[RMDB]
Source information:
Source: RMDB library 15KLIB, as collected in RNAgym. This 170-nucleotide RNA was probed chemically with 2A3 and DMS. Values cover nucleotides 27 to 129. Conditions: 150 mM KOAc, 10 mM MgCl2 and 150 mM bicine (pH 8.5), 24 C.
RNA sequence: GGGAACGACUCGAGUAGAGUCGAAAAACCUGCUCUACAGCAUGCAUUUAUGAAACAUAAGGGCGGUGAUUCAACUGACUUCAUAGCCCUCAUUAUGGCUUAUGGCAAUUGCACAUUUGGUGCUCCACUCCUGCCUCCUUCGGGAGGCAGAAAAGAAACAACAACAACAAC
Reactivity to 2A3 in 0.01 (KOAc 150mM, MgCl2 10mM, bicine 150mM(pH8.5), 24C), signal-to-noise 5, nucleotides 027 to 129: a040c000c000u000g000c050u010c010u020a060c040a020g000c000a020u030g000c030a050u000u070u150a150u160g060a140a070a020c030a010u080a060a050g010g010g000c020g010g000u010g000a050u070u000c060a150a150c120u250g030a030c000u040u010c010a020u000a020g000c010c000c000u020c000a050u030u110a050u070g040g020c030u060u070a030u070g050g000c050a060a140u090u060g000c020a010c030a040u110u110u140g060g000u000g000c030u010c010c020a000c000u030c010
Reactivity to DMS in 0.01 (KOAc 150mM, MgCl2 10mM, bicine 150mM(pH8.5), 24C), signal-to-noise 3, nucleotides 027 to 129: a140c000c000u000g000c040u020c030u020a030c150a110g000c030a090u030g010c000a080u010u020u020a110u160g010a100a000a130c050a060u070a070a070g020g000g020c000g000g000u000g000a070u050u000c000a150a050c220u060g080a100c150u000u000c020a000u020a220g000c000c000c000u000c120a160u010u050a000u040g000g030c000u040u010a090u020g020g060c110a030a030u080u020g050c000a010c120a080u070u030u000g030g010u010g010c030u050c030c040a010c080u010c040